[RMDB]
RNA sequence: GGGAACGACUCGAGUAGAGUCGAAAAGAUAUGGAUUGCAAUACACAGCAACAGCUCGGAAACGAGACAUGCUGGUAUGCAAUCCUAAGUCAAAACUCACGUUGUUGCUUCGGCAACAACGUGAGAACAUACUCAAUAGGUUCGCCUAUUGAGUAUGAAAAGAAACAACAACAACAAC
Reactivity to DMS in 0.01 (KOAc 150mM, MgCl2 10mM, bicine 150mM(pH8.5), 24C), signal-to-noise 9, nucleotides 027 to 126: g000a030u000a300u010g000g000a010u000u000g000c000a040a070u000a000c010a140c010a000g010c000a030a100c250a180g010c000u000c010g010g000a090a090a190c000g010a010g000a050c100a130u000g010c000u000g000g010u000a010u000g000c000a000a000u000c000c000u000a000a070g000u000c030a070a060a100a110c010u000c000a000c010g000u000u000g010u000u000g000c000u000u020c210g030g000c000a010a000c000a000a000c000g010u000g000a010g000a040a120
Reactivity to 2A3 in 0.01 (KOAc 150mM, MgCl2 10mM, bicine 150mM(pH8.5), 24C), signal-to-noise 9, nucleotides 027 to 126: g030a020u060a040u130g000g000a000u000u020g000c020a150a140u080a030c300a010c010a300g010c010a020a110c050a200g020c000u000c000g020g020a060a080a060c010g010a000g030a040c020a020u070g000c000u010g010g000u010a010u010g000c000a000a010u000c000c000u000a050a010g030u000c030a010a030a050a180c000u000c000a000c000g000u000u000g000u000u010g000c010u040u080c300g140g000c000a010a000c000a000a000c000g000u000g000a000g000a000a000